Structure probing data (2A3) for a 207-nucleotide construct. 2A3 adducts were read by reverse transcription with SuperScript II with manganese. Reactivities are given for positions 27 through 156.
RNA sequence: GGGAACGACUCGAGUAGAGUCGAAAACGGUUACGCCUUCUUUACCGUUAUCAAGGAAGGUACUCGGCCACGCUAAGGGAAGCAUUAUUCCUUAGGCGCAUGUCGCCGCCAGCAUGGUGUGAGGGGAAAAAGUAUGCUGGGUUCGCCCAGCAUACAAGUCUUUAAGCUCCUUCGGGAGCUUAAAGACAAAAGAAACAACAACAACAAC
Reactivity to 2A3 in 0.01 (KOAc 150mM, MgCl2 10mM, bicine 150mM(pH8.5), 24C), signal-to-noise 1, nucleotides 027 to 156: c000g000g060u070u090a100c130g000c010c000u000u000c000u000u000u040a040c020c030g200u170u080a100u180c090a010a000g030g000a000a000g010g010u050a070c000u000c010g000g030c010c000a010c070g000c040u070a070a020g040g000g000a020a000g030c200a290u040u200a120u300u000c000c010u070u100a040g050g000c000g000c010a070u220g070u170c030g000c010c010g000c010c010a030g000c000a060u070g000g000u120g080u200g050a060g000g000g010g000a000a210a000a000a000g020u000a000u000g010c000u000g000g000g000u000u060c090g040c010c000c000a000g000c000a000u000a000c000a000a000